Conditions: 150 mM KOAc, 10 mM MgCl2 and 150 mM bicine (pH 8.5), 24 C. Structure probing data (2A3 and DMS) for a 177-nucleotide construct. The 2A3 profile rests on 1,734 reads. For DMS, 755 sequencing reads were counted.
RNA sequence: GGGAACGACUCGAGUAGAGUCGAAAAUCAUCAGGCAAACCUUCGAAGUAUCCAACUUCGCGGAUCAGGCCUUUUUCAAUUUCUAACGCGAGGCAGAGGAUGCCCGAGAAAAUCAGGUCAAAUGCGUACCACCUCCCAUAUUCGUAUGGGAGGUGGUAAAAGAAACAACAACAACAAC
Reactivity to 2A3 in 0.01 (KOAc 150mM, MgCl2 10mM, bicine 150mM(pH8.5), 24C), signal-to-noise 3, nucleotides 027 to 126: u160c030a020u040c020a000g040g000c070a020a060a080c010c020u110u120c000g020a050a030g040u000a070u090c050c010a060a060c060u030u030c030g000c010g020g050a070u170c060a030g110g000c000c000u000u050u000u010u040c050a050a050u070u070u070c050u020a110a030c010g010c030g030a060g000g020c020a050g050a030g190g070a040u020g020c000c040c020g020a040g070a010a050a040a080u150c130a040g010g070u030c030a080a070a030u170g010c050g010u030
Reactivity to DMS in 0.01 (KOAc 150mM, MgCl2 10mM, bicine 150mM(pH8.5), 24C), signal-to-noise 1, nucleotides 027 to 126: u000c000a030u030c060a010g000g000c030a090a160a180c040c000u000u000c050g060a000a040g000u000a140u010c280c090a100a260c000u000u000c000g030c300g000g000a110u060c250a050g000g000c030c000u020u050u030u000u000c140a130a100u000u040u010c010u000a040a090c090g000c040g060a050g140g000c110a060g000a100g000g000a100u000g040c010c000c000g080a140g000a030a090a030a090u010c240a080g060g000u130c130a060a010a080u030g050c140g000u000

It was measured as part of the RMDB library OK1LIB.